An RNA of 177 nucleotides, treated with 2A3 and DMS and read out base by base. High 2A3 reactivity points to a flexible backbone, as in loops and unpaired stretches. For DMS, 5,456 sequencing reads were counted. The reactions ran in a buffer of 150 mM KOAc, 10 mM MgCl2 and 150 mM bicine (pH 8.5), at 24 C.
[RMDB]
RNA sequence: GGGAACGACUCGAGUAGAGUCGAAAAACGAAAUGGAAACUAUCCUAGGCAGAGAUUCUAAGUAGCCUGGAGGCUCCCAUGGGUAACAACUGGAAGACAUAGAAAUAAACUGUUGGAAAGUCAGUCCUAUCUAACUCAAUUUCGAUUGAGUUAGAUAAAAAGAAACAACAACAACAAC
Reactivity to 2A3 in 0.01 (KOAc 150mM, MgCl2 10mM, bicine 150mM(pH8.5), 24C), signal-to-noise 4, nucleotides 027 to 126: a000c030g010a030a020a020u060g000g020a080a010a000c020u040a180u210c020c040u080a040g030g000c040a020g040a020g020a300u300u040c040u110a120a120g070u040a100g160c010c000u000g000g010a020g000g020c020u020c030c000c000a010u050g020g000g030u090a060a020c010a020a020c030u030g010g010a000a000g010a020c010a020u140a050g120a020a160a000u170a070a160a010c020u020g000u020u010g010g000a030a000a010g010u040c030a030g020u000c000c000
Reactivity to DMS in 0.01 (KOAc 150mM, MgCl2 10mM, bicine 150mM(pH8.5), 24C), signal-to-noise 5, nucleotides 027 to 126: a100c060g000a060a120a040u010g010g000a070a040a040c030u000a070u000c020c010u010a040g010g030c020a110g010a250g000a110u010u010c130u020a090a180g020u000a150g010c010c010u010g000g010a070g000g000c050u000c030c010c010a040u000g010g010g010u000a050a060c120a100a050c040u000g000g000a230a100g000a040c060a030u000a090g000a090a120a110u010a050a080a100c150u000g000u010u000g000g000a190a080a050g010u000c070a060g000u000c020c040
2A3 adducts were read by reverse transcription with SuperScript II with manganese. Reactivities are given for positions 27 through 126.